RNA sequence: GGGAACGACUCGAGUAGAGUCGAAAACGCACCGGCGGAGCUUUACCGAUGUGGAAGAUGAACUUGACAUACUUAUUUCAACUAAGCACACUGCUGUGUGUCGUGUGGGUAUGAAAUUGGAUAGGUGCCUAUGACGACCAUUCGUGGUCGUCAUAGGAAAAGAAACAACAACAACAAC
Reactivity to 2A3 in 0.01 (KOAc 150mM, MgCl2 10mM, bicine 150mM(pH8.5), 24C), signal-to-noise 6, nucleotides 027 to 126: c040g000c000a020c000c020g020g000c050g050g050a030g040c000u080u070u090a120c030c010g100a120u110g050u120g090g050a070a060g020a120u120g040a050a080c070u140u100g040a020c010a030u100a030c050u060u050a070u080u190u110c030a080a050c030u090a080a050g040c000a000c010a020c060u180g020c070u090g060u010g040u030g020u160c060g010u020g010u010g040g020g000u090a090u060g070a080a160a130u060u080g060g010a020u060a120g060g000u020g050
Reactivity to DMS in 0.01 (KOAc 150mM, MgCl2 10mM, bicine 150mM(pH8.5), 24C), signal-to-noise 3, nucleotides 027 to 126: c030g000c090a070c050c030g000g020c090g000g000a080g010c090u000u000u000a120c090c010g000a030u030g020u010g000g000a010a020g020a050u030g000a060a090c070u020u020g000a170c100a060u020a030c030u030u020a050u020u010u010c060a060a070c090u010a130a110g000c020a020c020a030c050u000g020c110u030g000u050g000u020g020u010c070g010u020g010u010g010g020g050u000a030u000g000a020a030a110u030u000g000g010a080u020a020g020g000u000g020